[RMDB]
RNA sequence: GGGAACGACUCGAGUAGAGUCGAAAAAGCCAAUUCCUGGAUUUUGGACACCUCCAAACAUGCUAUGGAGCAUAAAUUGAAUCCCUUUGCCUGGUAUUGCAGAUGUUUUUGGCGGGGUGCGCCUAAACAUAAAACUUUAUUUCGAUAAAGUUUUAUGAAAAGAAACAACAACAACAAC
Reactivity to DMS in 0.01 (KOAc 150mM, MgCl2 10mM, bicine 150mM(pH8.5), 24C), signal-to-noise 7, nucleotides 027 to 126: a070g010c070c060a060a140u000u000c020c010u000g020g020a140u000u000u010u000g020g010a130c050a050c070c020u000c010c040a060a050a080c100a040u000g010c020u010a090u010g000g010a100g020c040a030u000a020a040a080u010u010g010a130a140u010c020c010c020u000u000u000g000c030c020u010g010g010u010a050u010u000g000c060a070g010a080u000g010u000u000u000u010u010g010g020c120g010g010g010g020u000g010c090g010c020c010u000a030a050a140
Reactivity to 2A3 in 0.01 (KOAc 150mM, MgCl2 10mM, bicine 150mM(pH8.5), 24C), signal-to-noise 4, nucleotides 027 to 126: a010g060c050c000a020a050u050u050c010c020u070g120g080a170u090u080u050u150g010g000a010c000a040c020c000u000c020c010a020a080a050c020a050u050g000c010u050a070u220g070g050a070g020c020a030u100a070a120a060u130u110g100a100a130u100c020c000c000u020u060u060g020c010c010u020g070g000u090a060u050u140g000c020a000g070a220u050g070u020u030u030u110u120g090g010c050g000g000g020g010u010g020c040g010c000c020u040a050a050a000
Source: RMDB library OK2TST, as collected in RNAgym. Structure probing data (DMS and 2A3) for a 177-nucleotide construct. The RNA was probed in 150 mM KOAc, 10 mM MgCl2 and 150 mM bicine (pH 8.5) at 24 C. Values are in units of 0.01, from 0 to 300, in steps of 10. High 2A3 reactivity points to a flexible backbone, as in loops and unpaired stretches. DMS adducts were read by reverse transcription with MarathonRT.